The record gives the reactivity of an RNA of 177 nucleotides to 2A3 and DMS. The reactions ran in a buffer of 150 mM KOAc, 10 mM MgCl2 and 150 mM bicine (pH 8.5), at 24 C. The DMS profile rests on 673 reads. For 2A3, 1,261 sequencing reads were counted. Values cover nucleotides 27 to 126.

RNA sequence: GGGAACGACUCGAGUAGAGUCGAAAACGGGCCGUAAGGAAGAAAAGCACCCAGAGGGAGGAAGCCACACAGGGGUUUGCAGAGAAAUCACCUCCAGAGGACCCCUUCAGCGAACAGAACGAUCGCUCUCCAUUUAUUAGUUCGCUAAUAAAUGGAGAAAAGAAACAACAACAACAAC
Reactivity to 2A3 in 0.01 (KOAc 150mM, MgCl2 10mM, bicine 150mM(pH8.5), 24C), signal-to-noise 1, nucleotides 027 to 126: c000g020g040g010c000c010g030u030a000a020g050g030a010a080g040a040a150a010a020g010c010a000c020c000c030a000g040a050g040g030g000a010g010g010a070a000g000c050c000a020c000a000c040a050g000g000g010g020u010u040u130g040c020a020g040a010g010a110a260a020u130c020a060c040c030u010c000c010a050g050a030g150g000a020c000c000c000c000u000u070c040a000g000c000g010a050a000c030a070g080a110a040c050g040a050u030c010g010c000u000
Reactivity to DMS in 0.01 (KOAc 150mM, MgCl2 10mM, bicine 150mM(pH8.5), 24C), signal-to-noise 2, nucleotides 027 to 126: c080g030g000g080c050c000g000u020a090a150g000g000a090a120g000a060a090a060a150g020c090a070c090c030c040a110g000a090g020g030g020a070g000g010a080a100g000c080c040a030c140a090c280a060g000g020g000g030u000u000u000g000c300a120g000a030g000a040a120a140u010c090a170c120c050u000c020c050a080g010a190g000g020a130c040c010c000c040u020u000c150a040g020c020g000a020a060c080a090g000a060a060c180g010a050u000c110g020c080u000